[RMDB]
RNA sequence: GGGAACGACUCGAGUAGAGUCGAAAAGAUCAGGUCACCCAGAGUAAUGUUGUAGUCGGCAAGAACACCUUCCACCUGGUGGAAUUCGGCCAAAUGGGUGGCGUCAACUGCUUCGUUACGGAAAACACCUAGGCCCACUGUUCGCAGUGGGCCUAGGAAAAGAAACAACAACAACAAC
Reactivity to 2A3 in 0.01 (KOAc 150mM, MgCl2 10mM, bicine 150mM(pH8.5), 24C), signal-to-noise 1, nucleotides 027 to 126: g000a040u050c050a030g030g010u000c060a060c000c000c000a000g020a030g020u000a000a180u210g020u020u020g010u020a000g020u020c020g000g000c030a100a060g000a130a000c000a070c000c000u000u080c090c020a000c240c170u280g000g000u000g010g030a150a030u050u050c070g090g000c000c000a120a000a000u090g000g100g000u050g000g060c000g030u020c000a000a090c000u000g010c000u080u090c000g000u000u000a210c130g150g170a030a030a030a030c000a000